[RMDB]
RNA sequence: GGGAACGACUCGAGUAGAGUCGAAAAGCGUACUACUCGCUCGGGUGUGUUGUCAGCUCUGGAUCUCCCAAAUAGGAGCGCACAGAGCUUGGAUUUACACAUCUCUAGCGUGGCGAGUAUCGCAAAAGUUACUUUUUGAUUCGUCAAAAAGUAACAACCUUGGUUCACGUUUCGACGUGAACCAAGGAAAAGAAACAACAACAACAAC
Reactivity to 2A3 in 0.01 (KOAc 150mM, MgCl2 10mM, bicine 150mM(pH8.5), 24C), signal-to-noise 1, nucleotides 027 to 156: g020c020g020u060a060c000u010a020c010u000c010g000c000u000c050g000g000g010u010g000u000g000u000u020g070u000c000a000g000c010u030c000u010g080g030a130u050c010u010c010c020c050a160a160a140u300a160g000g000a000g010c020g000c070a090c010a140g000a010g000c000u000u080g030g000a030u240u090u250a020c000a000c000a020u020c110u000c040u080a030g010c070g050u140g020g010c020g030a000g000u000a020u280c020g000c000a000a000a170a000g010u000u000a000c020u030u020u020u010u000g000a030u000u020c070g020u000c110a000a000a000a000a000g000u000a000a000c000a020a000